[RMDB]
The record gives the reactivity of an RNA of 177 nucleotides to DMS and 2A3. For DMS, 1,432 sequencing reads were counted. High DMS reactivity at an A or C suggests that its Watson-Crick edge is free.
RNA sequence: GGGAACGACUCGAGUAGAGUCGAAAAACUAUCUCUAGCUACUGAUGAUCAGUCCUUCAAGCCAUCUUUAGUUUGGCGCAUAAACGAAAUCAUCUCGUUCGCAACCACAAGGCUAGCAUCACAACAGUCCGCCUACUAAUUUCGAUUAGUAGGCGGAAAAAGAAACAACAACAACAAC
Reactivity to DMS in 0.01 (KOAc 150mM, MgCl2 10mM, bicine 150mM(pH8.5), 24C), signal-to-noise 1, nucleotides 027 to 126: a120c080u000a060u000c070u000c030u000a050g000c010u000a070c050u000g060a070u000g000a070u010c000a060g000u020c000c070u000u030c220a090a200g000c000c040a100u030c040u030u060u000a010g000u000u010u000g010g040c000g000c120a070u000a090a080a030c020g000a030a070a030u000c110a030u000c020u000c080g000u040u000c090g150c160a100a000c100c070a060c170a000a070g000g000c120u040a000g000c030a020u000c060a110c050a020a090c210a130g000
Reactivity to 2A3 in 0.01 (KOAc 150mM, MgCl2 10mM, bicine 150mM(pH8.5), 24C), signal-to-noise 3, nucleotides 027 to 126: a010c090u100a120u060c020u020c000u030a030g020c020u050a010c030u040g070a050u030g050a040u070c040a010g050u030c070c010u100u130c110a130a020g020c000c000a020u020c020u120u300u120a230g020u100u040u090g050g000c020g000c040a050u110a100a120a000c050g050a030a030a090u090c030a030u060c050u000c040g070u060u080c100g050c070a050a090c030c010a020c090a130a000g010g000c010u040a090g060c020a000u070c000a000c020a020a170c000a090g070